This 207-nucleotide RNA was probed chemically with 2A3 and DMS. Conditions: 150 mM KOAc, 10 mM MgCl2 and 150 mM bicine (pH 8.5), 24 C. For 2A3 the reverse transcriptase was SuperScript II with manganese. The DMS profile rests on 2,031 reads.
RNA sequence: GGGAACGACUCGAGUAGAGUCGAAAACGGCCAUCGCUGGGCCUCCAAUGGCUAACCACACGAGCGUACUGAAGCGCGCACGGUACGCGAUGAGUGUGAUGAAAGCCAUGGAGGCCUGUGCUGAAGCGCGCACGGCAACCGAAAGGUGCGACUAGAACGAAUAUACCCAGUUCGCUGGGUAUAUUCGAAAAGAAACAACAACAACAAC
Reactivity to 2A3 in 0.01 (KOAc 150mM, MgCl2 10mM, bicine 150mM(pH8.5), 24C), signal-to-noise 3, nucleotides 027 to 156: c040g060g030c030c010a040u040c000g000c010u010g000g000g010c010c000u000c010c030a180a300u010g010g000c000u020a040a010c030c000a000c000a010c000g020a020g010c000g000u000a000c010u010g080a230a060g010c020g000c000g000c000a000c010g020g010u000a010c000g010c000g030a120u040g000a000g010u000g040u010g010a000u070g090a240a140a010g000c020c000a000u000g000g000a020g020g000c000c000u000g000u000g000c010u030g020a120a050g020c010g000c000g010c000a020c000g000g000c000a000a010c010c010g040a060a030a030g020g000u010g020c000g000a010c040u070a040g100a120a020
Reactivity to DMS in 0.01 (KOAc 150mM, MgCl2 10mM, bicine 150mM(pH8.5), 24C), signal-to-noise 1, nucleotides 027 to 156: c040g010g000c010c070a050u000c000g040c080u000g010g010g030c010c010u000c010c030a030a050u010g030g060c000u000a230a090c050c000a010c010a010c000g000a050g000c000g040u000a080c010u000g020a010a020g000c000g000c010g120c000a300c020g010g000u010a010c020g050c000g010a140u030g010a250g030u000g000u020g000a030u000g000a160a140a010g030c010c000a060u000g010g000a040g000g020c000c000u000g000u010g000c000u010g040a090a010g010c020g010c010g000c050a300c000g060g020c030a080a010c030c000g030a110a080a170g060g000u020g010c020g000a120c040u000a110g000a110a230